[RMDB]
Conditions: 150 mM KOAc, 10 mM MgCl2 and 150 mM bicine (pH 8.5), 24 C. Chemical mapping of a 177-nucleotide RNA with DMS and 2A3. The 2A3 profile rests on 646 reads. The DMS profile rests on 8,403 reads. High 2A3 reactivity points to a flexible backbone, as in loops and unpaired stretches.

RNA sequence: GGGAACGACUCGAGUAGAGUCGAAAAGUUUCAUGACAUGUCGGCGUGAAUUCAAAACAAAGUGCAUGUCCGCUUGUUGAAAUUAAUAAACCUCUGUUUUUGGAGAGGUGGGAUAGUGGUGCGGUAACAUAGUCCGGUUUUUCGAAACCGGACUAUGAAAAGAAACAACAACAACAAC
Reactivity to DMS in 0.01 (KOAc 150mM, MgCl2 10mM, bicine 150mM(pH8.5), 24C), signal-to-noise 4, nucleotides 027 to 126: g000u000u010u000c010a050u030g000a030c010a000u000g010u050c000g000g000c070g030u010g000a080a070u010u040c220a080a090a080a140c270a100a100a060g030u020g000c020a010u000g000u030c010c040g000c030u000u000g000u000u020g000a040a030a030u030u010a060a050u010a060a180a050c020c010u000c020u000g010u010u010u010u020u070g020g010a010g000a020g000g010u000g010g000g000a090u010a040g030u020g000g000u020g000c090g000g000u020a090a220
Reactivity to 2A3 in 0.01 (KOAc 150mM, MgCl2 10mM, bicine 150mM(pH8.5), 24C), signal-to-noise 2, nucleotides 027 to 126: g050u020u000u090c140a120u120g120a020c000a000u030g040u230c000g000g000c000g000u030g000a060a170u170u040c040a060a080a080a100c070a100a090a020g090u070g030c000a020u000g010u010c000c000g000c000u070u040g000u010u020g030a040a070a080u120u030a020a210u080a090a090a020c010c010u000c040u040g240u130u080u100u080u150g150g000a000g000a020g050g030u020g000g010g010a120u090a080g050u050g010g020u110g070c000g060g060u020a010a010